[RMDB]
RNA sequence: GGGAACGACUCGAGUAGAGUCGAAAAGCUCGGAGACGAGCAAGGCUGACAAAACCAUGUCCCAACCUCCACGUGGUGUCGGCUGGAUAAUGCUGCAUUAUGUUGCAUUUAUCAACUGGGAAUAAAAACUAUGCACCGGCUUCGGCCGGUGCAUAGUAAAAGAAACAACAACAACAAC
Reactivity to 2A3 in 0.01 (KOAc 150mM, MgCl2 10mM, bicine 150mM(pH8.5), 24C), signal-to-noise 1, nucleotides 027 to 126: g000c000u000c000g020g040a090g040a070c060g000a000g000c000a010a090g050g000c000u000g000a060c010a000a140a000a000c000c030a020u000g000u010c040c000c000a030a080c000c000u000c000c010a030c040g000u020g000g000u000g030u020c000g000g000c000u030g070g000a040u000a040a070u000g000c040u000g010c000a090u040u300a060u300g110u060u000g000c000a030u080u020u030a080u020c060a060a080c050u030g000g000g110a110a020u160a010a000a020a000

An RNA of 177 nucleotides, treated with 2A3 and read out base by base. The 2A3 profile rests on 549 reads. Reactivities are given for positions 27 through 126. The data come from the RNA Mapping Database (RMDB), library OK1LIB.